[RMDB]
RNA sequence: GGGAACGACUCGAGUAGAGUCGAAAAAUCCGUGGAUAUCGGGUGCGCACCGCACCUCCUCCGGCUGUUCUCCUUCACAGCUAUGACCCAUGCGCCGCACAGGCAGUGUCCCGCUUCGUGUGCAAAAAAAACCGCCAGUACUUCGGUACUGGCGGAAGAUCCUAGUACCGUUCGCGGUACUAGGAUCAAAAGAAACAACAACAACAAC
Reactivity to 2A3 in 0.01 (KOAc 150mM, MgCl2 10mM, bicine 150mM(pH8.5), 24C), signal-to-noise 1, nucleotides 027 to 156: a040u050c050c020g010u080g040g010a050u040a070u290c060g050g000g000u040g000c100g010c050a190c120c100g020c000a010c000c000u050c010c020u040c000c010g020g000c020u010g000u050u030c090u090c050c030u160u080c050a020c000a070g000c010u070a050u200g090a140c020c010c010a030u100g070c100g030c010c090g010c000a010c010a070g010g000c010a010g020u010g020u070c000c000c010g050c040u030u020c050g090u000g000u000g000c010a000a000a000a220a000a000a000a000c010c010g020c020c000a000g000u000a010c000u050u070c140g070g000u000a000c000u000g010g000c000g000g110a000a000
Record summary:
Conditions: 150 mM KOAc, 10 mM MgCl2 and 150 mM bicine (pH 8.5), 24 C. The record gives the reactivity of an RNA of 207 nucleotides to 2A3. For 2A3, 681 sequencing reads were counted.